[RMDB]
An RNA of 177 nucleotides, treated with DMS and 2A3 and read out base by base. Values cover nucleotides 27 to 126. 2A3 adducts were read by reverse transcription with SuperScript II with manganese. The RNA was probed in 150 mM KOAc, 10 mM MgCl2 and 150 mM bicine (pH 8.5) at 24 C. DMS adducts were read by reverse transcription with MarathonRT. For 2A3, 1,204 sequencing reads were counted. It was measured as part of the RMDB library OK2TST.
RNA sequence: GGGAACGACUCGAGUAGAGUCGAAAAGAUAAUGUUCAGCUCAACACCGUGCUCUCCAAUUCCUUCGGGUUUGGCGGCACCAACGCCACGCUGGUGUUUCAGCGGUAUCAGGGCUGACGGAGAGGGACAGUCGUGAUGGGUUCGCCCAUCACGACUGAAAAGAAACAACAACAACAAC
Reactivity to DMS in 0.01 (KOAc 150mM, MgCl2 10mM, bicine 150mM(pH8.5), 24C), signal-to-noise 2, nucleotides 027 to 126: g040a110u080a090a050u000g020u000u000c050a030g020c030u000c000a130a180c300a030c040c010g010u000g000c120u020c070u000c000c000a040a030u030u000c010c000u000u000c230g020g000g000u000u000u000g000g030c300g030g160c070a060c010c050a000a090c000g000c100c080a080c180g030c060u000g000g020u000g010u010u010u000c160a120g010c000g010g000u000a040u000c080a210g000g000g020c000u000g000a030c120g000g050a070g010a070g010g000g000a300
Reactivity to 2A3 in 0.01 (KOAc 150mM, MgCl2 10mM, bicine 150mM(pH8.5), 24C), signal-to-noise 1, nucleotides 027 to 126: g000a000u230a110a040u160g120u110u040c000a000g000c020u000c030a070a020c010a020c050c020g080u070g020c010u030c000u000c150c010a000a030u130u180c010c000u060u090c160g040g020g080u000u000u000g000g010c000g000g090c050a010c000c010a010a040c000g070c090c050a130c060g050c090u070g000g000u010g060u000u090u050c070a010g000c020g000g000u020a050u120c090a080g070g020g000c000u020g010a010c060g030g030a060g020a010g030g000g020a010